[RMDB]
RNA sequence: GGGAACGACUCGAGUAGAGUCGAAAAACUCUCCUGGACACUCUCUCAACAUCUCACACCCUCGUUCAAAGCGGGGACUCCUGGACUUUGUAGGGGAUAUUCAGUCCAAGCUUUGGGGAACUGCCACGCCUUUUUAAAAGUUCGCUUUUAAAAAGGCAAAAGAAACAACAACAACAAC
Reactivity to 2A3 in 0.01 (KOAc 150mM, MgCl2 10mM, bicine 150mM(pH8.5), 24C), signal-to-noise 2, nucleotides 027 to 126: a000c050u000c000u000c000c010u000g050g030a030c010a010c030u050c010u010c010u000c030a000a070c010a100u010c000u040c030a050c000a030c060c000c010u030c020g010u130u050c060a070a040a060g030c010g000g000g040g000a000c000u020c040c020u070g130g050a120c040u190u110u150g090u210a050g060g050g030g020a000u030a090u150u200c060a000g010u000c020c000a010a020g020c000u090u110u050g010g010g000g030a060a010c030u040g010c010c000a060c110
Reactivity to DMS in 0.01 (KOAc 150mM, MgCl2 10mM, bicine 150mM(pH8.5), 24C), signal-to-noise 3, nucleotides 027 to 126: a090c110u000c030u010c010c020u010g010g030a070c060a050c040u000c030u000c030u010c030a060a100c060a090u000c040u010c040a120c140a140c070c010c010u000c030g010u010u010c150a030a070a080g010c020g020g000g010g010a080c040u010c050c040u000g010g010a070c090u000u010u010g020u000a120g010g030g000g000a090u000a060u010u010c110a060g020u010c000c010a090a070g010c080u010u000u010g010g010g020g020a080a080c060u000g020c060c060a100c180
Structure probing data (2A3 and DMS) for a 177-nucleotide construct. Source: RMDB library OK2TRN, as collected in RNAgym. The 2A3 profile rests on 2,037 reads. DMS adducts were read by reverse transcription with MarathonRT.